[RMDB]
Chemical mapping of a 177-nucleotide RNA with DMS and 2A3.
RNA sequence: GGGAACGACUCGAGUAGAGUCGAAAAGCGAAAACCUCCUCCACCUUUUUUUGGUGGUGGAGGUGAAAGCGGGCUCAGUCUCCACCUUUUUUUGGUGGUGACUGUGGUGGUGCCCGUCCACCGCCAAGGGAUAACUAUACUUCGGUAUAGUUAUCCCAAAAGAAACAACAACAACAAC
Reactivity to DMS in 0.01 (KOAc 150mM, MgCl2 10mM, bicine 150mM(pH8.5), 24C), signal-to-noise 3, nucleotides 027 to 126: g000c030g000a100a060a130a020c010c000u000c000c000u000c000c000a000c000c000u000u000u010u050u080u030u000g010g020u010g000g000u000g010g010a000g000g000u000g000a020a100a150g010c010g010g000g010c050u050c020a010g000u000c000u000c010c010a000c010c000u010u000u020u020u030u030u020g000g030u000g010g000u000g000a020c000u010g030u040g010g030u000g010g010u010g000c070c000c000g000u030c030c000a040c010c000g000c030c040a110a190
Reactivity to 2A3 in 0.01 (KOAc 150mM, MgCl2 10mM, bicine 150mM(pH8.5), 24C), signal-to-noise 7, nucleotides 027 to 126: g030c030g030a060a050a010a020c000c000u000c000c010u000c000c000a010c000c020u060u080u100u090u080u290u260g010g000u000g000g000u000g000g000a000g000g000u000g000a010a000a000g010c010g000g010g000c040u050c110a000g000u000c010u010c000c000a000c000c000u020u070u070u070u050u300u280g000g000u000g000g000u000g000a000c000u000g020u020g020g010u010g000g020u040g010c010c000c000g030u030c000c010a010c000c010g010c020c010a080a110
The data come from the RNA Mapping Database (RMDB), library OK1LIB. 2A3 adducts were read by reverse transcription with SuperScript II with manganese. The reactions ran in a buffer of 150 mM KOAc, 10 mM MgCl2 and 150 mM bicine (pH 8.5), at 24 C.